The record gives the reactivity of an RNA of 177 nucleotides to DMS and 2A3. The data come from the RNA Mapping Database (RMDB), library OK2TRN.
[RMDB]
RNA sequence: GGGAACGACUCGAGUAGAGUCGAAAACUAGUGAUCCGACUCCAUGAGUCCAUGUGCAGUCUAGUAUGACUAGCAUCAUAGUACUAGCUAGCUAGGAUCUAGGAUCGAUCGUACGUACAUCAUGCUCGACUAUUAACGUUUUCGAACGUUAAUAGUCAAAAGAAACAACAACAACAAC
Reactivity to DMS in 0.01 (KOAc 150mM, MgCl2 10mM, bicine 150mM(pH8.5), 24C), signal-to-noise 9, nucleotides 027 to 126: c040u000a100g020u010g000a040u000c060c050g010a040c090u000c020c060a180u000g000a100g010u000c060c070a060u010g020u000g010c060a040g000u000c020u000a070g000u000a040u000g010a060c100u000a090g020c140a090u010c070a060u010a160g020u000a090c010u000a020g010c040u000a120g010c010u000a100g010g010a120u000c010u000a180g000g000a060u000c030g000a040u000c030g010u000a050c130g010u000a060c150a060u010c100a050u000g010c120u000c140
Reactivity to 2A3 in 0.01 (KOAc 150mM, MgCl2 10mM, bicine 150mM(pH8.5), 24C), signal-to-noise 9, nucleotides 027 to 126: c020u030a040g080u020g150a020u020c090c080g030a030c080u000c030c010a060u100g030a030g150u000c030c020a090u130g060u070g070c040a010g000u030c020u020a020g030u030a060u120g060a050c050u040a050g060c030a070u100c020a030u060a050g030u010a020c010u010a010g020c010u020a020g000c000u020a050g010g020a020u010c020u030a080g000g020a020u020c020g010a030u010c020g020u070a070c050g050u040a030c040a190u200c030a060u190g050c060u090c090